[RMDB]
RNA sequence: GGGAACGACUCGAGUAGAGUCGAAAAGAUAUGGAUCGGAUGGGAGCUAUGAAGUCGGAAACGAUGGAGCUUUAUCCCGAUCCUAAGUCAAAACUCGUCUUUGGUUCUUCGGAACCAAAGACGAGAACUUUGCUGUAAUCUUCGGAUUACAGCAAAGAAAAGAAACAACAACAACAAC
Reactivity to DMS in 0.01 (KOAc 150mM, MgCl2 10mM, bicine 150mM(pH8.5), 24C), signal-to-noise 1, nucleotides 027 to 126: g000a030u000a300u010g000g020a000u000c000g000g000a050u000g010g020g000a010g010c000u020a240u000g040a090a170g000u000c000g000g000a200a080a230c010g010a010u000g000g030a020g050c000u000u000u010a080u010c130c020c010g020a020u000c000c000u000a010a140g010u020c020a100a060a070a120c010u000c000g000u010c010u000u000u000g010g010u010u000c000u000u000c260g010g000a020a040c010c020a000a000a000g010a000c000g000a000g000a010a060
Reactivity to 2A3 in 0.01 (KOAc 150mM, MgCl2 10mM, bicine 150mM(pH8.5), 24C), signal-to-noise 1, nucleotides 027 to 126: g050a010u090a040u190g010g000a020u000c020g000g010a050u180g210g130g050a010g000c000u060a210u300g020a030a010g000u000c000g000g000a130a070a060c000g010a010u030g000g010a000g020c000u030u030u040a020u210c050c090c000g010a000u000c000c000u020a130a030g040u020c020a020a000a060a150c030u000c000g020u020c020u010u010u010g010g030u020u000c000u030u060c300g060g000a000a040c000c050a040a010a000g010a000c000g000a000g000a010a000
Notes: This 177-nucleotide RNA was probed chemically with DMS and 2A3. The RNA was probed in 150 mM KOAc, 10 mM MgCl2 and 150 mM bicine (pH 8.5) at 24 C. DMS adducts were read by reverse transcription with MarathonRT. For 2A3 the reverse transcriptase was SuperScript II with manganese.